[RMDB]
RNA sequence: GGGAACGACUCGAGUAGAGUCGAAAACAGGAGGACCUCUCCGCCGCCACCUCCAAGCUCGAGGAGAAGGAGAAGACCGUUCAAGAGGCUGAGGCUGAGGUCGCUUCUUUGAACCGUCGCAUGACCAGGAUAAUACCGAGUUCGCUCGGUAUUAUCCAAAAGAAACAACAACAACAAC
Reactivity to DMS in 0.01 (KOAc 150mM, MgCl2 10mM, bicine 150mM(pH8.5), 24C), signal-to-noise 3, nucleotides 027 to 126: c160a090g010g000a030g000g030a070c060c000u010c040u000c060c080g020c070c150g000c020c080a120c070c020u000c040c070a140a150g010c040u000c080g010a070g000g020a100g000a100a090g010g000a070g020a160a110g000a050c090c120g000u010u000c130a100a110g000a060g010g030c030u000g010a190g010g010c090u010g010a070g020g010u000c030g010c000u040u010c000u010u020u010g000a050a110c040c150g030u000c040g000c120a060u000g010a120c080c090a160
Reactivity to 2A3 in 0.01 (KOAc 150mM, MgCl2 10mM, bicine 150mM(pH8.5), 24C), signal-to-noise 2, nucleotides 027 to 126: c020a020g040g020a010g010g040a080c010c010u030c010u020c020c020g000c010c010g070c030c000a040c000c000u020c010c010a030a090g050c050u030c080g140a080g010g090a030g050a040a030g060g040a040g040a080a030g090a080c040c020g060u060u080c090a090a030g050a030g170g000c030u060g070a020g090g000c120u080g030a010g020g020u000c010g030c050u010u000c000u050u060u100g020a020a010c000c010g040u050c020g010c080a080u120g040a070c030c040a040